[RMDB]
RNA sequence: GGGAACGACUCGAGUAGAGUCGAAAAGAUAUGGAGUGAUGGGAGCCUGUGAUCGGAAACGAUCACUAGGCGACGAUCAUCCUCCUAAGUCAAAACGUUCUGACUUGCUUCGGCAAGUCAGAACGAACAUAUACCACCUGUUCGCAGGUGGUAUAUGAAAAGAAACAACAACAACAAC
Reactivity to DMS in 0.01 (KOAc 150mM, MgCl2 10mM, bicine 150mM(pH8.5), 24C), signal-to-noise 7, nucleotides 027 to 126: g000a030u000a210u000g000g000a020g010u010g020a010u000g000g000g010a060g030c000c000u000g000u010g000a000u000c000g010g000a040a040a080c010g010a000u000c000a000c000u010a010g020g010c010g010a100c240g010a070u010c000a000u000c010c000u000c000c000u000a010a100g000u000c020a090a060a100a210c020g000u000u000c000u000g000a010c000u000u000g000c000u000u010c220g020g000c000a000a000g000u000c000a000g010a000a000c000g000a030a090
Reactivity to 2A3 in 0.01 (KOAc 150mM, MgCl2 10mM, bicine 150mM(pH8.5), 24C), signal-to-noise 4, nucleotides 027 to 126: g010a010u040a020u080g010g010a010g030u300g050a010u000g000g000g010a010g000c000c020u000g000u010g000a010u000c000g000g010a020a010a020c010g000a000u000c000a010c020u030a010g000g000c000g010a030c000g000a000u010c000a000u000c000c010u000c010c000u010a070a010g020u020c040a000a000a090a160c020g000u000u000c000u000g000a010c000u000u010g020c010u050u090c260g160g000c000a000a010g000u000c000a000g000a000a000c000g000a000a000